[RMDB]
RNA sequence: GGGAACGACUCGAGUAGAGUCGAAAAGCACCAUGACACUCAGUGUCAGUGGCCCAGCCUGACUGCGCAGAGUUUGGAGAUAAGAAAAACGUUGGUAAGGCAGGUUAGAAUGCAGAUUGCCUGAUUGAUGCUGGUGCAGGUUCGCCUGCACCAGCAUAAAAGAAACAACAACAACAAC
Reactivity to DMS in 0.01 (KOAc 150mM, MgCl2 10mM, bicine 150mM(pH8.5), 24C), signal-to-noise 1, nucleotides 027 to 126: g020c080a120c000c010a110u000g010a060c020a050c040u030c170a110g020u000g020u000c000a020g000u000g030g000c100c060c010a080g000c040c040u000g020a120c040u010g030c070g030c050a050g010a110g000u000u000u000g010g010a140g010a110u000a080a080g000a070a060a020a070a050c030g000u000u020g000g010u030a110a080g000g000c000a030g000g020u000u000a070g000a020a120u000g030c060a040g000a100u020u000g010c020c040u020g000a160u000u000g020
Conditions: 150 mM KOAc, 10 mM MgCl2 and 150 mM bicine (pH 8.5), 24 C. Structure probing data (DMS) for a 177-nucleotide construct.